[RMDB]
RNA sequence: GGGAACGACUCGAGUAGAGUCGAAAAGAUAUGGACUUCAUCAUUAAGGUUCGAAGUAGACCGAUGAAACAAUUUCGGAAACGAAAUUGUGGAGGUCUACGUAGUUUAAUGAGUGAAGUCCUAAGUCGUUUCAUAGUCUGUUCGCAGACUAUGAAACAAAAGAAACAACAACAACAAC
Reactivity to 2A3 in 0.01 (KOAc 150mM, MgCl2 10mM, bicine 150mM(pH8.5), 24C), signal-to-noise 3, nucleotides 027 to 126: g100a060u180a050u240g020g000a000c000u010u010c000a020u020c000a010u080u020a060a060g270g040u240u180c050g110a230a030g010u000a000g000a000c020c020g300a300u030g000a030a000a010c000a000a000u010u000u020c030g020g010a100a030a030c010g000a000a010a020u000u010g000u010g000g020a010g010g000u010c000u000a000c000g000u000a000g000u020u000u030a020a000u030g020a020g290u100g000a000a000g000u000c000c000u010a000a010g020u020c060
Reactivity to DMS in 0.01 (KOAc 150mM, MgCl2 10mM, bicine 150mM(pH8.5), 24C), signal-to-noise 2, nucleotides 027 to 126: g020a090u010a270u020g010g000a010c000u000u010c020a060u000c000a010u000u010a030a010g000g030u010u000c040g010a160a300g020u000a010g000a020c000c000g000a110u020g000a250a150a010c010a000a020u000u000u000c010g000g010a080a050a210c000g010a010a010a020u000u020g000u020g030g000a030g000g000u000c010u000a000c010g000u010a110g000u010u000u000a000a010u000g000a050g020u010g010a020a010g020u000c000c000u000a020a070g000u010c080
The record gives the reactivity of an RNA of 177 nucleotides to 2A3 and DMS. The data come from the RNA Mapping Database (RMDB), library TTRDES. Conditions: 150 mM KOAc, 10 mM MgCl2 and 150 mM bicine (pH 8.5), 24 C.